RNA sequence: GGGAACGACUCGAGUAGAGUCGAAAAUCUGCGGUGACGAUUCCAUUUCCAAUGCCAUUUUGAGCAAGUGUUUCAGAAGCGUAUUGCUGCUCUUCGAGCUUUUUGCGAGCAUUUGCAGCAUUUUGUGUAGUCAUGCCCAGUUCGCUGGGCAUGACUAAAAAGAAACAACAACAACAAC
Reactivity to 2A3 in 0.01 (KOAc 150mM, MgCl2 10mM, bicine 150mM(pH8.5), 24C), signal-to-noise 1, nucleotides 027 to 126: u110c050u050g050c030g000g010u200g000a030c000g040a050u000u090c020c020a040u070u070u050c000c050a060a000u190g000c020c000a130u070u110u120u110g040a000g030c000a000a150g000u020g050u050u050u050c130a000g010a140a000g000c020g040u020a000u000u220g000c060u000g110c070u000c020u160u180c010g070a060g080c040u180u210u000u250u300g060c000g030a000g050c050a000u000u000u000g000c000a010g000c000a050u050u020u000u180g010u000g040

Structure probing data (2A3) for a 177-nucleotide construct.
Source: RMDB library OK1LIB, as collected in RNAgym.